[RMDB]
RNA sequence: GGGAACGACUCGAGUAGAGUCGAAAAACUGUGUGGAGUGCGAGUGUAUGCAGUAAAGGGUUAGCUUAGCUGACUUGAGGUACUCACACCCAUAUUCCGAAGAAAAGACUGGCCCUCAGCCUGAGCCUCCGAAAUAAUCUCUAAGCCCUUAGAAUACGUUAAUAGGGGAAUUCGUUCCCCUAUUAACAAAAGAAACAACAACAACAAC
Reactivity to 2A3 in 0.01 (KOAc 150mM, MgCl2 10mM, bicine 150mM(pH8.5), 24C), signal-to-noise 2, nucleotides 027 to 156: a000c070u110g000u050g010u030g060g030a090g020u050g040c040g030a050g000u050g000u090a040u180g050c070a030g090u200a040a080a080g040g000g000u030u020a010g000c020u090u090a070g010c010u000g060a030c000u050u060g070a040g050g020u040a040c010u010c020a050c000a000c060c030c020a020u010a110u200u050c010c020g010a120a060g040a080a100a040a090g050a060c030u020g030g000c020c000c000u010c030a010g060c010c000u040g010a010g000c000c030u000c010c000g000a000a060a000u100a030a060u070c000u000c000u070a090a130g010c020c010c020u020u000a010g010a060a080u210a120c060
Reactivity to DMS in 0.01 (KOAc 150mM, MgCl2 10mM, bicine 150mM(pH8.5), 24C), signal-to-noise 2, nucleotides 027 to 156: a120c050u000g000u010g100u000g020g010a110g040u000g000c060g000a050g030u000g020u000a100u000g050c060a090g000u000a090a100a280g000g000g030u000u000a050g030c010u000u030a160g010c010u000g010a060c030u000u000g000a080g050g030u010a040c030u010c050a130c040a040c010c010c000a110u000a090u000u000c020c040g000a130a080g010a140a110a150a230g050a050c050u000g000g020c030c030c020u000c030a140g010c030c030u000g010a080g000c060c010u000c020c030g000a040a070a150u000a090a090u010c030u000c040u000a100a220g020c020c000c020u000u000a150g010a050a110u000a070c180